[RMDB]
RNA sequence: GGGAACGACUCGAGUAGAGUCGAAAAGGAAAAAUCAAAUGUCCACAAGUACUGUGGAAAGGCCCUUGCAUUAACCCUCCUGUUAGUGAUCUUAGGAUUCAGCGCCAACGUGGUACGUGUAUUACUCACCGCUGCUGAGUUUCGACUCAGCAGCGGUAAAAGAAACAACAACAACAAC
Reactivity to 2A3 in 0.01 (KOAc 150mM, MgCl2 10mM, bicine 150mM(pH8.5), 24C), signal-to-noise 1, nucleotides 027 to 126: g000g050a000a130a000a030a000u300c270a190a170a090u250g020u050c000c000a000c000a130a000g180u190a060c100u000g020u000g030g000a020a000a000g060g000c000c000c000u000u050g010c050a050u080u080a040a030c000c000c050u020c010c020u000g030u070u080a070g000u000g100a020u000c000u050u000a060g020g020a070u000u080c060a040g020c030g060c030c000a030a050c000g040u000g000g000u000a000c000g100u090g000u060a150u130u100a030c000u010c040
This 177-nucleotide RNA was probed chemically with 2A3. 2A3 adducts were read by reverse transcription with SuperScript II with manganese. Conditions: 150 mM KOAc, 10 mM MgCl2 and 150 mM bicine (pH 8.5), 24 C. The 2A3 profile rests on 555 reads.